[RMDB]
RNA sequence: GGGAACGACUCGAGUAGAGUCGAAAAUGAGGCUUAUCCCGGGGAACCCGGCGAAUCGUCCCCACAUAGCAGCUCCCGGACCCCCUUCCAAAGAGACCGGGGGGGAGUUUGGAGCGCGGGGGGGACCUAAGUUGGAUCUUCGGAUCCAACAAAAGAAACAACAACAACAAC
Reactivity to DMS in 0.01 (KOAc 150mM, MgCl2 10mM, bicine 150mM(pH8.5), 24C), signal-to-noise 5, nucleotides 027 to 129: u020g000a070g020g010c070u000u000a110u050c130c000c000g030g010g020g010a140a120c070c060c060g010g020c060g000a070a080u070c190g010u010c020c010c020c000a060c070a140u010a190g020c020a110g030c030u010c000c020c080g000g000a080c020c020c010c000c020u070u000c000c010a040a140a120g050a140g000a100c300c120g000g040g030g020g000g000g010a040g000u050u020u030g030g010a040g020c020g000c000g060g000g050g000g010g020g000a000c040c070u040a010a060
Reactivity to 2A3 in 0.01 (KOAc 150mM, MgCl2 10mM, bicine 150mM(pH8.5), 24C), signal-to-noise 5, nucleotides 027 to 129: u080g000a020g040g000c040u090u120a060u120c000c000c010g030g000g010g010a090a070c010c000c000g030g040c030g070a010a090u090c020g020u000c020c000c040c010a070c030a050u130a020g000c080a040g000c000u090c030c010c000g030g050a080c000c000c010c000c000u120u110c030c030a120a180a040g170a070g040a100c090c110g000g000g000g000g000g010g000a040g030u040u090u050g000g010a010g000c000g000c020g040g000g010g010g010g000g000a000c000c020u080a070a020